This 177-nucleotide RNA was probed chemically with 2A3 and DMS. Source: RMDB library OK2TRN, as collected in RNAgym. Conditions: 150 mM KOAc, 10 mM MgCl2 and 150 mM bicine (pH 8.5), 24 C.
RNA sequence: GGGAACGACUCGAGUAGAGUCGAAAAAAUGGCUUUGUAGAUUCAGUACGCUUAACCAUUUAUCGUAUUGAUGCUAUUAAUUAUGAAAUUGAUGGUUAUGUUUACAAUCAGCAACAACGUCAAAAAAAUACACUGCUGUAUUCGUACAGCAGUGUAUAAAAGAAACAACAACAACAAC
Reactivity to 2A3 in 0.01 (KOAc 150mM, MgCl2 10mM, bicine 150mM(pH8.5), 24C), signal-to-noise 2, nucleotides 027 to 126: a000a050u060g000g030c020u000u010u030g010u020a050g010a030u050u020c090a020g020u010a020c000g000c040u010u020a020a000c010c020a050u030u020u040a090u100c000g010u020a010u020u060g060a010u090g160c080u100a050u250u050a090a050u120u110a050u030g020a090a070a040u100u120g010a000u000g000g030u000u030a010u030g010u010u020u020a020c010a000a000u020c010a020g110c030a030a010c000a000a010c040g000u010c020a050a000a110a060a000a050
Reactivity to DMS in 0.01 (KOAc 150mM, MgCl2 10mM, bicine 150mM(pH8.5), 24C), signal-to-noise 3, nucleotides 027 to 126: a080a090u010g030g020c020u000u000u000g000u000a100g020a020u000u000c230a100g020u000a020c080g010c010u010u000a000a020c030c030a020u000u000u000a140u000c010g010u000a030u000u000g010a040u000g020c220u020a060u000u010a030a030u000u000a020u000g000a100a060a090u020u000g010a020u010g000g000u010u000a020u000g000u000u000u000a020c010a030a020u000c010a130g000c150a080a030c050a010a010c060g010u010c030a000a020a050a110a060a050